RNA sequence: GGGAACGACUCGAGUAGAGUCGAAAAAAAAAGAUAUGGACCAAGUCAUCCUUGGAUUUAUAUACCACUUUCUAUCGGAAACGAUAGAAAUGUAUAUUGUCAGGAUCCUUUGGUCCUAAGUCAAAAACAUACAUACGGAGUUCGCUCCGUAUGUAUGAAAAGAAACAACAACAACAAC
Reactivity to DMS in 0.01 (KOAc 150mM, MgCl2 10mM, bicine 150mM(pH8.5), 24C), signal-to-noise 3, nucleotides 027 to 126: a040a040a080a100a100g010a040u010a300u000g000g000a010c000c000a000a000g000u000c090a010u000c010c010u010u010g010g000a030u000u000u000a000u000a010u020a010c020c020a020c040u000u000u000c000u000a010u000c010g000g020a150a090a150c000g010a010u000a000g000a000a070a000u010g000u000a010u010a010u000u000g010u010c000a040g010g000a010u000c130c020u010u000u010g000g020u000c000c000u000a000a100g010u010c050a060a080a060a110a170
Reactivity to 2A3 in 0.01 (KOAc 150mM, MgCl2 10mM, bicine 150mM(pH8.5), 24C), signal-to-noise 2, nucleotides 027 to 126: a020a000a000a010a040g090a050u100a050u150g000g000a020c010c000a010a010g020u040c010a010u010c020c020u100u150g090g020a030u110u300u010a020u000a000u010a000c020c020a180c090u000u020u000c000u010a010u010c000g000g050a160a030a040c000g000a010u000a000g000a000a000a000u110g000u010a010u000a010u000u010g030u010c010a000g020g000a010u000c010c000u220u100u170g010g020u000c000c010u000a070a020g020u030c020a010a000a020a150a100